An RNA of 177 nucleotides, treated with 2A3 and DMS and read out base by base. For 2A3, 98,509 sequencing reads were counted. The RNA was probed in 150 mM KOAc, 10 mM MgCl2 and 150 mM bicine (pH 8.5) at 24 C. Values cover nucleotides 27 to 126. For DMS the reverse transcriptase was MarathonRT.
RNA sequence: GGGAACGACUCGAGUAGAGUCGAAAAGUCCAGGGUGUGCCGUGUCCUAUUCCACCUGCGAUGGCCUGAUAUUGUAGGGGACAAUGGACGUCAGUGCAACAGCAGGUGGCGUGCCCUUCGCGGUGGAUCUUUAUACGUGUUUCGGCGCGUAUGAGGGAAAAGAAACAACAACAACAAC
Reactivity to 2A3 in 0.01 (KOAc 150mM, MgCl2 10mM, bicine 150mM(pH8.5), 24C), signal-to-noise 9, nucleotides 027 to 126: g050u010c010c010a010g020g020g010u140g020u050g020c010c010g020u020g040u050c000c010u030a050u110u030c000c010a020c000c010u010g000c010g040a030u030g020g000c000c000u010g000a010u030a020u050u040g020u020a040g000g030g000g020a020c010a010a060u090g060g090a080c050g010u010c000a010g010u020g190c020a040a010c010a020g000c000a000g000g020u010g000g000c000g010u030g030c000c000c000u040u050c040g000c030g010g030u040g040g040a040
Reactivity to DMS in 0.01 (KOAc 150mM, MgCl2 10mM, bicine 150mM(pH8.5), 24C), signal-to-noise 9, nucleotides 027 to 126: g010u010c010c020a090g000g000g020u010g010u010g010c020c020g010u010g000u000c020c030u010a110u030u010c000c000a020c000c000u010g010c000g000a010u020g000g010c010c010u000g000a040u010a070u010u010g010u010a120g010g000g010g010a280c080a070a070u020g010g010a080c130g010u000c010a020g010u040g010c010a010a010c140a300g000c010a010g000g010u000g000g010c150g000u010g000c030c010c020u010u010c040g010c030g000g000u010g000g000a050